[RMDB]
Source: RMDB library M2PK90, as collected in RNAgym. The record gives the reactivity of an RNA of 177 nucleotides to DMS. The reactions ran in a buffer of 150 mM KOAc, 10 mM MgCl2 and 150 mM bicine (pH 8.5), at 24 C.

RNA sequence: GGGAACGACUCGAGUAGAGUCGAAAAUGUCACACAGUAGCGAGGGAUGCAAUUAAUUGCAUCUACACCAAGCUGAAGGCUUGGAUUUCGACUAGUGUCGAGUCGUUCCCACUCGCUACGCCCACAAUCAAGGUCUGGAAUUCGUUCCAGACCUUGAAAAAGAAACAACAACAACAAC
Reactivity to DMS in 0.01 (KOAc 150mM, MgCl2 10mM, bicine 150mM(pH8.5), 24C), signal-to-noise 1, nucleotides 027 to 126: u010g020u020c080a120c240a200c120a030g030u000a000g020c000g000a020g020g000g000a000u000g000c000a000a060u020u020a130a080u020u000g010c000a000u000c000u000a120c060a180c020c000a000a000g010c000u000g000a110a070g000g000c000u000u000g000g000a210u000u000u000c000g000a010c000u020a080g020u000g000u000c000g000a010g000u000c000g000u010u010c000c000c000a000c030u000c000g010c010u000a000c000g000c010c020c040a120c150a060a090